RNA sequence: GGGAACGACUCGAGUAGAGUCGAAAAUUGUUUUUGUUCCAACGCAUCCUAUGGCAGGAACCGAAUUUUCUGGUCCUGAUGCUGGAUUCGAAAGCUUGUUUGAGAAUCGUUGGUGCCUUAUCACUCCCUUUCUGAGGUGGUUCGCCACCUCAGAAAGAAAAGAAACAACAACAACAAC
Reactivity to DMS in 0.01 (KOAc 150mM, MgCl2 10mM, bicine 150mM(pH8.5), 24C), signal-to-noise 1, nucleotides 027 to 126: u000u000g000u000u000u000u000u000g000u000u000c030c010a070a120c100g000c270a040u010c010c060u000a100u000g020g010c030a040g000g000a020a070c090c040g060a080a150u010u000u000u000c040u020g050g000u000c070c070u020g000a050u010g020c050u000g010g000a050u000u040c020g020a090a190a090g000c070u000u010g000u000u010u000g010a110g000a130a040u010c020g000u000u000g000g020u000g030c030c090u000u000a040u010c130a100c130u000c040c020